[RMDB]
RNA sequence: GGGAACGACUCGAGUAGAGUCGAAAAACAGGCGUUCUUAGCGAAGGCAGACACGCCUGGAACCUCAGAUGUCGAGGCUGCGCUUGACCAGAAGGCCGAGGAGUACAUUGCGCUGCUCCUCGGCCUGAACACCACCGCAAUUCGUUGCGGUGGUGUUAAAAGAAACAACAACAACAAC
Reactivity to DMS in 0.01 (KOAc 150mM, MgCl2 10mM, bicine 150mM(pH8.5), 24C), signal-to-noise 2, nucleotides 027 to 126: a090c010a010g000g000c000g020u000u000c030u000u010a170g020c020g010a250a070g010g030c000a090g000a040c200a020c030g000c000c020u010g010g000a070a100c020c010u000c080a090g010a060u010g030u000c030g000a010g000g000c040u000g000c130g010c010u000u000g000a110c060c160a170g000a160a030g000g010c000c000g000a010g000g000a000g030u010a040c000a120u000u000g040c300g010c180u020g020c010u010c020c000u000c000g010g000c000c000u000g000
Source: RMDB library OK2TRN, as collected in RNAgym.
Structure probing data (DMS) for a 177-nucleotide construct.
The reactions ran in a buffer of 150 mM KOAc, 10 mM MgCl2 and 150 mM bicine (pH 8.5), at 24 C.